This 177-nucleotide RNA was probed chemically with DMS and 2A3. Reactivities are given for positions 27 through 126. The RNA was probed in 150 mM KOAc, 10 mM MgCl2 and 150 mM bicine (pH 8.5) at 24 C. 2A3 adducts were read by reverse transcription with SuperScript II with manganese. For DMS, 3,639 sequencing reads were counted.
RNA sequence: GGGAACGACUCGAGUAGAGUCGAAAAACAAAACUCUUCGGCCGUCUUUUCAGUGACUAACGAACUUGCAGAAACAGCUAAACGACCGGUUGGUGUCGCAAUGGCCGCUUCACAGUCAGCUUUAAACCAGCAAUAUAUUCUUCGGAAUAUAUUGCUGAAAAGAAACAACAACAACAAC
Reactivity to DMS in 0.01 (KOAc 150mM, MgCl2 10mM, bicine 150mM(pH8.5), 24C), signal-to-noise 4, nucleotides 027 to 126: a100c050a080a100a110a090c080u000c050u000u000c050g030g030c050c100g020u000c010u000u000u000u030c080a090g000u000g010a090c070u020a090a100c080g000a070a040c080u010u020g010c060a080g000a080a040a080c100a070g010c040u010a030a120a090c070g000a030c040c030g020g020u000u010g030g010u020g020u000c020g020c060a040a060u000g010g020c020c030g020c060u000u000c040a070c060a060g000u000c050a070g010c060u000u000u010a030a090a130c280
Reactivity to 2A3 in 0.01 (KOAc 150mM, MgCl2 10mM, bicine 150mM(pH8.5), 24C), signal-to-noise 4, nucleotides 027 to 126: a010c020a000a100a000a030c020u000c020u090u080c030g040g010c050c020g040u010c040u040u120u040u090c040a040g000u010g090a050c030u040a090a040c050g030a040a030c020u060u090g020c040a040g080a090a100a040c010a030g020c030u070a100a110a050c030g050a030c000c020g120g070u090u110g050g040u090g020u050c010g010c030a010a070u060g020g000c010c010g010c000u040u040c030a030c010a080g030u060c010a020g030c010u020u120u200a080a060a050c070